[RMDB]
RNA sequence: GGGAACGACUCGAGUAGAGUCGAAAAGAUAUGGAGAUGGCCCAGACAUGAUCGGUACCAUCGGAAACGAUGGGACGAUCAACAGCUGGGUCCAUCUCCUAAGUCAAACGGGGGCUUCGGCCCCCGAGGGAUAAGGAAGGUUCGCCUUCCUUAUCCCAAAAGAAACAACAACAACAAC
Reactivity to DMS in 0.01 (KOAc 150mM, MgCl2 10mM, bicine 150mM(pH8.5), 24C), signal-to-noise 2, nucleotides 027 to 126: g000a030u000a300u000g010g000a010g000a010u000g010g010c030c020c000a000g010a070c130a300u000g000a010u000c000g000g000u000a260c000c000a020u000c010g000g000a080a120a190c000g000a010u000g000g010g000a170c060g000a000u000c010a040a040c300a220g010c000u020g020g020g010u010c020c000a000u000c000u040c000c000u000a030a050g030u000c020a080a130a180c010g000g020g010g010g000c010u000u010c300g000g000c000c000c000c000c000g000a000
Reactivity to 2A3 in 0.01 (KOAc 150mM, MgCl2 10mM, bicine 150mM(pH8.5), 24C), signal-to-noise 1, nucleotides 027 to 126: g010a000u050a040u120g000g000a000g000a000u000g030g020c000c000c000a000g030a080c040a110u090g020a000u000c000g150g090u300a090c020c000a010u000c010g000g000a100a100a010c040g000a010u030g010g010g000a010c020g020a000u030c000a010a020c010a020g110c000u010g020g000g000u010c000c000a010u010c000u000c000c000u000a010a000g000u000c010a060a050a000c020g030g000g010g020g060c010u060u080c300g220g010c000c030c000c010c000g000a000